[RMDB]
Source: RMDB library OK2TST, as collected in RNAgym. This 177-nucleotide RNA was probed chemically with 2A3 and DMS. Conditions: 150 mM KOAc, 10 mM MgCl2 and 150 mM bicine (pH 8.5), 24 C. For DMS the reverse transcriptase was MarathonRT. Values cover nucleotides 27 to 126.

RNA sequence: GGGAACGACUCGAGUAGAGUCGAAAACAUCACGCCAAGUGACAGAGGAGUAGCAGGUUCUUGUUCUGAACACCGUCAUCUGUUGCCCAAGCUGGAGUGCGCUCACUGCAGCCUCCAACCCUUGGGCUCACGCGCAUCUGUUCGCAGAUGCGCGUGAAAAAGAAACAACAACAACAAC
Reactivity to 2A3 in 0.01 (KOAc 150mM, MgCl2 10mM, bicine 150mM(pH8.5), 24C), signal-to-noise 1, nucleotides 027 to 126: c020a110u100c080a030c020g040c080c040a140a020g100u020g080a050c040a030g070a030g080g020a070g000u120a020g000c100a010g010g030u100u030c090u150u120g100u080u110c140u100g070a100a020c050a070c090c060g070u040c000a050u010c020u070g050u080u080g000c000c000c010a030a020g000c020u020g030g010a020g070u210g050c040g010c040u020c090a240c090u300g070c020a090g000c000c000u010c020c020a020a060c050c020c000u000u000g000g020g000c010
Reactivity to DMS in 0.01 (KOAc 150mM, MgCl2 10mM, bicine 150mM(pH8.5), 24C), signal-to-noise 1, nucleotides 027 to 126: c130a120u000c120a050c120g010c020c120a070a110g010u000g020a020c020a020g010a080g040g000a060g010u010a030g010c170a010g000g000u010u000c010u000u000g010u000u020c120u010g010a030a090c060a070c080c060g000u000c060a080u030c050u020g010u000u000g000c010c000c000a030a040g030c230u010g000g000a020g000u000g050c060g010c030u010c300a060c230u020g030c010a110g000c000c000u000c000c000a000a030c100c290c020u030u000g000g000g030c010